[RMDB]
RNA sequence: GGGAACGACUCGAGUAGAGUCGAAAACAACAACACCACUUGUGCGAACGUCUUGCGCCACUUCCAGGUCCAGUCUGGUUUCUAACCCGCCUGGAGAAAGAAGGGUUAUCACCAGGGAAGAGUUUGACUGUAUGAGUGAGUUCGCUCACUCAUACAGAAAAGAAACAACAACAACAAC
Reactivity to DMS in 0.01 (KOAc 150mM, MgCl2 10mM, bicine 150mM(pH8.5), 24C), signal-to-noise 4, nucleotides 027 to 126: c050a050a060c050a030a070c060a100c080c060a070c070u000u010g020u010g010c020g010a070a070c120g010u000c050u000u010g010c100g000c030c040a090c030u000u000c020c020a090g010g010u000c030c020a050g020u000c010u000g000g000u000u010u010c160u010a060a040c000c000c060g000c210c010u000g000g010a060g020a090a100a080g020a090a070g010g000g000u010u000a080u000c150a060c030c010a040g010g000g010a040a050g010a060g010u000u000u010g020a180
Reactivity to 2A3 in 0.01 (KOAc 150mM, MgCl2 10mM, bicine 150mM(pH8.5), 24C), signal-to-noise 3, nucleotides 027 to 126: c020a000a020c020a030a030c000a020c010c030a050c040u100u070g050u060g100c020g060a070a030c020g080u040c050u060u120g010c050g020c010c000a130c020u040u000c000c030a060g030g080u000c020c010a020g030u000c040u020g040g030u000u040u050c090u080a050a040c000c010c010g010c040c030u030g090g010a050g110a020a070a010g070a020a010g040g010g000u040u030a050u080c030a020c050c010a010g020g030g030a060a070g050a050g090u050u120u180g060a060
The record gives the reactivity of an RNA of 177 nucleotides to DMS and 2A3.
As a SHAPE reagent, 2A3 marks flexible, mostly unpaired nucleotides at the ribose 2'-OH.
Values cover nucleotides 27 to 126.
It was measured as part of the RMDB library OK2TRN.
The RNA was probed in 150 mM KOAc, 10 mM MgCl2 and 150 mM bicine (pH 8.5) at 24 C.
For 2A3 the reverse transcriptase was SuperScript II with manganese.